[RMDB]
Structure probing data (2A3 and DMS) for a 177-nucleotide construct. Values cover nucleotides 27 to 126. It was measured as part of the RMDB libraries RFM100 and RFMREP. For DMS the reverse transcriptase was MarathonRT.
RNA sequence: GGGAACGACUCGAGUAGAGUCGAAAAUUUCCAAGCGGAAGAAACUGUGUGUUCAUUUUAUGGAUUUUCGUGUUGUACGAUUUUUUUCAGUUGCGUUAGCAACUACGUGCCCACAAUACUUCCGAUGCACAGACCUUCGAUUCGUCGAAGGUCUGUGAAAAGAAACAACAACAACAAC
Reactivity to 2A3 in 0.01 (KOAc 150mM, MgCl2 10mM, bicine 150mM(pH8.5), 24C), signal-to-noise 4, nucleotides 027 to 126: u000u000u000c000c000a030a010g070c020g010g000a020a000g020a040a120a020c030u000g010u010g020u000g020u090u050c040a140u100u080u120u280a190u220g050g000a020u020u000u020u040c020g020u070g060u200u300g110u190a010c000g000a020u010u020u010u010u010u020u140c070a030g000u000u000g030c040g090u110u200a060g000c000a000a000c010u020a040c050g000u010g000c000c000c030a000c010a010a030u050a080c000u000u000c000c000g030a030u090g020
Reactivity to DMS in 0.01 (KOAc 150mM, MgCl2 10mM, bicine 150mM(pH8.5), 24C), signal-to-noise 2, nucleotides 027 to 126: u010u010u020c000c020a130a160g040c020g010g000a010a010g010a050a120a210c150u020g000u000g000u000g000u020u010c010a150u000u020u040u030a110u060g000g000a040u000u000u000u010c030g010u000g000u010u030g010u040a080c040g020a010u010u000u020u020u000u070u030c090a000g010u010u000g000c000g000u010u050a050g030c030a010a000c000u020a030c140g020u010g000c240c110c000a000c020a010a020u000a140c010u000u000c000c020g000a110u020g020